[RMDB]
RNA sequence: GGGAACGACUCGAGUAGAGUCGAAAAGAAACUUCUAACCUUGCAGCUACAAAUGACGAAUUAAAAAAACAAUCCGCAGAGACUAACGGUGUUUUGCAAAAAGUUAAGCAAGAAGUGAAUGAUGUUCAGAAUACAAAAUCUUCAAUCUACACAGACACGACUAGUCAGGAUUCGUCCUGACUAGUCGAAAAGAAACAACAACAACAAC
Reactivity to 2A3 in 0.01 (KOAc 150mM, MgCl2 10mM, bicine 150mM(pH8.5), 24C), signal-to-noise 1, nucleotides 027 to 156: g070a010a010a000c030u090u070c040u100a080a050c030c000u000u040g000c000a070g000c000u060a070c070a080a130a250u140g030a060c070g060a020a100u220u120a090a090a100a060a060a060a060c010a000a040u040c010c010g000c160a110g010a070g070a100c100u090a060a000c010g070g000u030g000u000u060u030u090g000c040a020a020a020a020a020g000u150u100a030a000g000c040a030a100g010a060a000g060u010g040a040a070u130g000a070u040g030u050u270c140a030g130a130a090u100a140c090a000a250a000a140u010c000u060u110c060a000a040u000c000u170a040c230a030c040a110g170a130c170a030